Description:
Chemical mapping of a 177-nucleotide RNA with DMS and 2A3. The RNA was probed in 150 mM KOAc, 10 mM MgCl2 and 150 mM bicine (pH 8.5) at 24 C. Values are in units of 0.01, from 0 to 300, in steps of 10. For 2A3 the reverse transcriptase was SuperScript II with manganese. The 2A3 profile rests on 3,949 reads. It was measured as part of the RMDB library TTRDES.

[RMDB]
RNA sequence: GGGAACGACUCGAGUAGAGUCGAAAAGAUAUGGAGACCUUUGAACAACAGCAUGGUAUCGGAAACGAUACCCAUGACAUGUUCUUUGGUCUCCUAAGUCAAACGUUCGAUCUUCGGAUCGAACGAACAGUGCACAUAACUUCGGUUAUGUGCACUGAAAAGAAACAACAACAACAAC
Reactivity to DMS in 0.01 (KOAc 150mM, MgCl2 10mM, bicine 150mM(pH8.5), 24C), signal-to-noise 2, nucleotides 027 to 126: g000a020u000a070u020g000g000a000g010a010c000c000u000u000u000g000a000a000c010a080a030c220a180g000c010a010u000g000g010u000a000u000c000g020g000a080a010a040c000g010a010u000a000c250c050c060a020u000g010a020c050a300u040g040u000u000c000u000u000u000g010g020u000c000u000c000c000u010a000a030g010u000c010a160a080a230c020g000u000u000c000g000a020u000c000u010u010c190g040g000a010u000c000g000a000a010c000g020a030a100
Reactivity to 2A3 in 0.01 (KOAc 150mM, MgCl2 10mM, bicine 150mM(pH8.5), 24C), signal-to-noise 2, nucleotides 027 to 126: g020a000u010a000u060g000g000a000g000a000c010c010u000u060u030g040a060a060c200a090a020c030a300g030c000a000u000g040g000u000a000u000c000g010g000a040a000a000c000g000a000u010a000c000c010c000a000u000g060a010c070a230u300g000u000u000c010u000u010u000g000g020u010c000u000c000c000u000a000a000g000u010c000a050a020a200c030g000u000u010c010g010a000u030c020u050u130c300g120g000a010u010c000g010a000a000c000g000a020a000